[RMDB]
RNA sequence: GGGAACGACUCGAGUAGAGUCGAAAACAAAAAGCCGUCGACUUCGCGCUGAUGCGGUCCCUGACGCACGAUAAUUGAUGAAUCCAAUGACGGCUGCAAUCGCAAUUGGUAGAGCGAUGAGCGCAAGUGGUCGAUUAAGUCCGACGACAAUAUCACCUGUUCGCUAUAUGUUCGCAUAUAGCGAACAAAAAGAAACAACAACAACAAC
Reactivity to DMS in 0.01 (KOAc 150mM, MgCl2 10mM, bicine 150mM(pH8.5), 24C), signal-to-noise 1, nucleotides 027 to 156: c030a070a080a130a120a060g050c020c020g000u000c060g000a130c130u000u000c100g000c040g000c030u000g010a160u000g000c020g010g000u000c000c010c000u000g000a240c150g000c020a040c000g050a070u000a070a120u000u050g000a090u020g000a100a140u030c070c040a170a060u010g040a160c000g050g000c040u000g010c120a070a100u000c090g020c000a070a120u000u020g020g030u000a190g000a210g010c020g020a030u010g000a040g050c020g030c040a130a160g020u010g000g020u000c010g050a140u000u000a020a260g010u010c030c020g050a130c020g020a050c000a040a110u020a160u020c080a060c050c030
Reactivity to 2A3 in 0.01 (KOAc 150mM, MgCl2 10mM, bicine 150mM(pH8.5), 24C), signal-to-noise 3, nucleotides 027 to 156: c010a000a130a030a020a030g020c020c010g000u010c000g050a090c040u060u060c020g030c010g030c060u090g010a160u070g000c020g010g090u080c030c000c000u010g050a050c010g060c020a000c070g010a040u040a160a080u080u200g090a050u120g050a160a140u070c100c060a010a040u070g030a030c000g000g000c000u030g030c030a030a030u020c000g000c010a050a220u070u070g160g000u140a020g020a000g050c010g020a010u030g020a040g000c010g000c040a050a020g040u080g040g070u070c030g030a050u050u100a090a030g070u010c100c050g050a030c060g000a010c110a040a090u080a030u100c050a090c080c000
Conditions: 150 mM KOAc, 10 mM MgCl2 and 150 mM bicine (pH 8.5), 24 C. Structure probing data (DMS and 2A3) for a 207-nucleotide construct. 2A3 adducts were read by reverse transcription with SuperScript II with manganese.